[RMDB]
RNA sequence: GGGAACGACUCGAGUAGAGUCGAAAAACUACCAUAUUACAGGCUAAUGGUACACACAUUGAGUACCAGGAGAAUGCCUCAUUGUUGACCUAUUUAGCAUUCGCUGUCGACCCUAAGGCUGCCUAUCAAUGCGUAUCAUCUUCGGAUGAUACGCAUUAAAAGAAACAACAACAACAAC
Reactivity to DMS in 0.01 (KOAc 150mM, MgCl2 10mM, bicine 150mM(pH8.5), 24C), signal-to-noise 3, nucleotides 027 to 126: a110c120u010a170c040c030a150u010a110u000u000a150c180a050g010g010c000u000a190a170u000g010g010u000a000c020a090c080a110c240a170u010u010g020a070g030u000a000c020c010a030g000g000a160g010a120a070u010g010c010c000u000c090a040u000u010g000u000u000g010a060c040c230u000a060u010u010u010a050g010c050a150u000u000c130g020c060u020g000u000c050g000a050c020c060c090u010a050a050g000g000c020u000g020c030c010u000a060u000c210
Reactivity to 2A3 in 0.01 (KOAc 150mM, MgCl2 10mM, bicine 150mM(pH8.5), 24C), signal-to-noise 2, nucleotides 027 to 126: a000c080u120a060c000c020a060u080a120u200u190a130c090a020g030g000c000u030a030a040u010g010g010u030a020c040a010c010a000c040a260u090u180g030a040g010u000a000c000c020a000g040g020a050g060a090a050u150g000c020c000u010c030a070u070u050g020u000u000g000a010c000c030u120a250u170u160u050a040g030c050a130u150u160c120g040c100u050g010u010c010g010a010c010c000c000u050a020a010g030g010c010u010g020c010c010u060a130u170c050
Background: An RNA of 177 nucleotides, treated with DMS and 2A3 and read out base by base. For DMS the reverse transcriptase was MarathonRT. For 2A3, 1,404 sequencing reads were counted. For DMS, 2,137 sequencing reads were counted. The RNA was probed in 150 mM KOAc, 10 mM MgCl2 and 150 mM bicine (pH 8.5) at 24 C.